[RMDB]
Record summary:
Structure probing data (2A3 and DMS) for a 177-nucleotide construct. For 2A3, 1,142 sequencing reads were counted. The reactions ran in a buffer of 150 mM KOAc, 10 mM MgCl2 and 150 mM bicine (pH 8.5), at 24 C. 2A3 adducts were read by reverse transcription with SuperScript II with manganese. For DMS the reverse transcriptase was MarathonRT. Values cover nucleotides 27 to 126.
RNA sequence: GGGAACGACUCGAGUAGAGUCGAAAAUCCAUUAAGUUCGCUUAAUGGAAAAUAAAAAGAGGAGCUAGCUACACCCUCUAUAAGCUAAGAUCGAAAGAUCAUAAACUUAAAGGUUCGCCUUUAAGAAGAAAUACUGGUAGUUCGCUACCAGUAUUUCAAAAGAAACAACAACAACAAC
Reactivity to 2A3 in 0.01 (KOAc 150mM, MgCl2 10mM, bicine 150mM(pH8.5), 24C), signal-to-noise 1, nucleotides 027 to 126: u060c000c010a000u020u010a000a000g000u020u080c180g000c090u020u000a000a000u010g000g000a030a070a040a020u060a020a080a000a020a010g040a070g020g050a030g070c050u040a020g010c030u040a140c040a030c030c030c000u010c060u050a100u030a150a020g040c040u080a240a000g000a030u000c000g020a070a040a000g010a000u000c010a080u130a010a090a020c010u000u000a030a000a000g040g030u000u070c190g070c020c000u000u010u000a040a030g000a010a020
Reactivity to DMS in 0.01 (KOAc 150mM, MgCl2 10mM, bicine 150mM(pH8.5), 24C), signal-to-noise 1, nucleotides 027 to 126: u000c000c000a010u000u000a000a010g050u000u000c240g010c000u050u000a000a000u000g010g000a030a090a060a030u000a040a100a090a180a030g000a020g000g010a190g050c080u010a070g000c090u010a060c100a090c050c050c010u000c010u000a130u030a030a090g010c170u000a090a060g020a040u010c000g000a120a140a060g000a030u000c000a130u020a110a080a100c000u000u000a020a020a080g000g000u000u010c200g020c020c010u000u000u000a010a010g000a040a090